Chemical mapping of a 177-nucleotide RNA with 2A3 and DMS. Values cover nucleotides 27 to 126. 2A3 adducts were read by reverse transcription with SuperScript II with manganese.

[RMDB]
RNA sequence: GGGAACGACUCGAGUAGAGUCGAAAAACAUAUUACGAUAUGAUUCAGAUGGUGUCUUACUGGUUCGUACCAAGGGACAUAAUGGUUUCUUGUUUCCAACCAAAGAACAAGUGGCGAGCCUGAAUAACGAUGUCAGAAAGUUCGCUUUCUGACAUCGAAAAGAAACAACAACAACAAC
Reactivity to 2A3 in 0.01 (KOAc 150mM, MgCl2 10mM, bicine 150mM(pH8.5), 24C), signal-to-noise 5, nucleotides 027 to 126: a000c030a010u110a020u050u120a050c150g100a040u020a010u090g180a120u040u130c040a050g060a190u140g070g010u030g030u020c000u010u070a130c040u030g020g020u020u080c070g050u120a070c010c000a040a040g040g000g020a020c020a030u180a060a180u100g090g010u000u000u000c000u000u020g010u010u010u000c020c050a060a090c010c020a040a100a040g030a040a010c010a040a060g000u050g100g040c060g000a010g020c010c010u020g020a030a010u040a050a010
Reactivity to DMS in 0.01 (KOAc 150mM, MgCl2 10mM, bicine 150mM(pH8.5), 24C), signal-to-noise 3, nucleotides 027 to 126: a110c030a030u000a010u030u020a080c220g040a040u000a010u040g000a110u020u010c060a070g000a050u010g020g030u010g000u010c010u000u000a150c070u000g010g000u040u000c250g000u020a050c060c020a040a020g000g020g000a020c030a010u010a060a100u030g020g010u000u000u000c010u000u010g000u000u000u010c030c020a020a080c280c120a020a060a060g010a020a030c060a020a030g020u010g000g020c070g000a130g000c060c000u000g000a060a040u030a050a150